[RMDB]
RNA sequence: GGGAACGACUCGAGUAGAGUCGAAAAGCGGAGUUGUGCGCGACUCCCCUUAGGUGAUACUGGCGACGGGUCCCGCGUUGCAGGGUCCUGACGCGCUCACCCACUCCCUACCUCCCCACACCUCCGCAGCGCAGCUCCCUCAGACCCCAACUGGCUACACUAAUUUAGGAUUCGUCCUAAAUUAGUGAAAAGAAACAACAACAACAAC
Reactivity to DMS in 0.01 (KOAc 150mM, MgCl2 10mM, bicine 150mM(pH8.5), 24C), signal-to-noise 2, nucleotides 027 to 156: g000c130g030g020a060g010u010u000g040u020g020c080g030c010g000a080c020u000c000c000c020c040u020u000a060g030g000u000g030a080u000a070c030u020g040g010c040g030a170c070g010g010g000u000c020c030c000g010c060g010u000u010g040c040a090g000g030g000u000c010c010u000g020a090c030g020c010g020c230u000c020a060c020c010c040a100c080u000c020c020c010u010a110c040c020u000c020c020c010c040a120c080a120c050c000u000c020c040g010c070a180g030c020g040c000a050g010c020u010c010c010c000u000c020a130g010a220c020c000c000c040a080a100c090u000g000g020c020u000a250
Reactivity to 2A3 in 0.01 (KOAc 150mM, MgCl2 10mM, bicine 150mM(pH8.5), 24C), signal-to-noise 4, nucleotides 027 to 156: g090c110g000g000a010g000u010u010g030u030g030c040g000c010g060a050c030u040c000c000c000c010u050u130a030g000g020u020g030a050u080a250c100u140g120g000c030g010a080c010g020g000g000u030c000c020c000g000c070g110u120u270g030c170a120g010g000g000u040c010c000u020g010a040c030g000c000g030c040u020c020a030c000c020c010a060c030u060c010c010c000u030a080c010c020u020c010c020c000c010a040c000a010c000c010u090c020c020g000c020a060g000c010g000c000a000g000c000u000c000c010c030u040c000a050g020a110c000c020c010c000a030a030c040u040g030g060c020u140a010